[RMDB]
RNA sequence: GGGAACGACUCGAGUAGAGUCGAAAAUACCCGCAAUCAAUAAACGCAAACAACGCAAACUACGCUCCCGCUUACGCCAAAGCUGCGUAAGUCUAACUCUUCGGAGCCGUCAAGCCUCACAAUGCUAACUAGUGGGGAUUUGGCGUAACUUUGUUAGGCUUGAUAUAGCCUUCGGGCUAUAUCAAGCAAAAGAAACAACAACAACAAC
Reactivity to 2A3 in 0.01 (KOAc 150mM, MgCl2 10mM, bicine 150mM(pH8.5), 24C), signal-to-noise 3, nucleotides 027 to 156: u160a040c040c030c020g020c090a070a210u210c020a020a060u170a160a230a050c080g040c120a080a190a140c120a070a070c100g000c060a010a020a060c050u030a020c060g000c030u030c010c000c020g000c000u010u010a000c000g000c000c020a280a170a160g110c300u110g000c080g000u000a000a000g000u000c000u030a050a050c000u030c060u210u170c060g000g000a000g000c000c000g020u000c000a040a030g030c000c000u000c000a000c010a000a110u190g050c030u100a090a120c030u070a130g000u000g000g000g000g000a000u000u000u000g000g020c000g010u030a010a010c020u030u060u030g060u040u070a060g000
Structure probing data (2A3) for a 207-nucleotide construct.
Values cover nucleotides 27 to 156.
Conditions: 150 mM KOAc, 10 mM MgCl2 and 150 mM bicine (pH 8.5), 24 C.
2A3 adducts were read by reverse transcription with SuperScript II with manganese.
Source: RMDB library ARCHII, as collected in RNAgym.